[RMDB]
RNA sequence: GGGAACGACUCGAGUAGAGUCGAAAAAGGAGUGGAAGGCGGGGAGGGCGGGGAGGAGUGUUACCCUACGGGAACUGCUGAGUGCCCCUGACGUCCAGACCCUCCCCCGUCCGGGAGAAUGGAGAUUGGCCCUGGCUGUUCGCAGCCAGGAAAAGAAACAACAACAACAAC
Reactivity to 2A3 in 0.01 (KOAc 150mM, MgCl2 10mM, bicine 150mM(pH8.5), 24C), signal-to-noise 2, nucleotides 027 to 129: a000g060g020a000g000u150g010g060a070a010g080g000c040g010g010g000g000a120g000g000g000c000g000g000g000g000a020g040g040a020g000u040g050u020u110a160c010c000c000u030a060c050g000g000g030a140a000c010u080g000c050u070g030a040g070u100g020c000c010c000c010u080g050a020c090g070u070c010c020a000g010a150c000c000c000u010c000c010c040c000c000g090u000c000c000g020g000g000a020g000a030a010u090g010g000a000g010a060u060u180g090g000c060
Reactivity to DMS in 0.01 (KOAc 150mM, MgCl2 10mM, bicine 150mM(pH8.5), 24C), signal-to-noise 2, nucleotides 027 to 129: a110g050g010a110g000u010g020g020a140a060g070g010c080g070g040g070g050a080g000g000g000c100g030g030g000g030a000g000g000a000g020u070g050u050u030a020c040c030c030u090a230c200g000g060g000a060a050c000u030g060c080u050g010a060g010u060g010c000c000c050c190u040g050a170c160g000u110c030c050a100g030a110c150c030c020u020c000c000c000c000c000g000u000c070c100g050g020g010a040g030a050a040u030g000g050a050g050a060u000u000g040g050c210

An RNA of 170 nucleotides, treated with 2A3 and DMS and read out base by base.
Source: RMDB library 15KLIB, as collected in RNAgym.
For 2A3, 2,703 sequencing reads were counted.